[RMDB]
RNA sequence: GGGAACGACUCGAGUAGAGUCGAAAAGACGUACGUCCUCCUUCGGAUGCCCAGGUCGGACCGCGAGGAGGUGGAGAUGCCAUGCCGACCCGAAGAGGAAAGAAGGACGCGAGACGCAAACCUGUGACAUUAGCCGUAAGUUCGCUUACGGCUAAUGAAAAGAAACAACAACAACAAC
Reactivity to DMS in 0.01 (KOAc 150mM, MgCl2 10mM, bicine 150mM(pH8.5), 24C), signal-to-noise 3, nucleotides 027 to 126: g000a130c030g000u010a090c020g010u010c010c020u000c030c000u000u000c040g000g000a190u010g020c040c010c020a080g030g020u010c030g000g020a250c000c140g020c160g010a090g000g030a090g020g000u000g000g000a130g000a130u010g030c010c020a080u000g020c010c020g010a050c030c000c050g000a130a080g000a090g000g010a050a060a100g030a100a040g000g000a050c240g000c010g010a040g010a020c030g000c030a070a080a150c030c030u000g010u010g020a240